Chemical mapping of a 207-nucleotide RNA with DMS. Values are in units of 0.01, from 0 to 300, in steps of 10. For DMS the reverse transcriptase was MarathonRT. In probing experiments dimethyl sulfate is read out at A N1 and C N3, which are open when not base-paired. The RNA was probed in 150 mM KOAc, 10 mM MgCl2 and 150 mM bicine (pH 8.5) at 24 C.
RNA sequence: GGGAACGACUCGAGUAGAGUCGAAAAUAGGCGAACGAGAGGCCCUCUCUUGUGCGGAGUUGUCACGCUGACAAAAUUGUUAUGAUGUCCGAUUCCGGUAGCAUCGCGGCGAUGCUUUCAUAGGACAUCUUAUGAACCCAAGAGCUUCGGGGAAGCAGCAUUUACUAUAUUUCGAUAUAGUAAAUGCAAAAGAAACAACAACAACAAC
Reactivity to DMS in 0.01 (KOAc 150mM, MgCl2 10mM, bicine 150mM(pH8.5), 24C), signal-to-noise 4, nucleotides 027 to 156: u010a100g020g020c020g020a060a040c010g010a040g010a050g010g000c060c050c040u000c020u000c020u000u000g020u000g040c040g020g010a230g020u000u000g010u010c030a110c110g020c060u000g010a140c070a040a070a080a110u000u010g030u000u010a080u000g010a020u000g020u000c010c000g010a240u010u010c140c050g030g000u000a000g010c000a020u000c000g020c170g030g010c180g020a030u000g010c000u000u000u000c020a080u000a110g020g010a030c020a010u000c000u010u000a040u000g000a080a140c050c040c030a060a050g000a210g010c040u000u000c060g020g020g000g020a120a060g030c030a100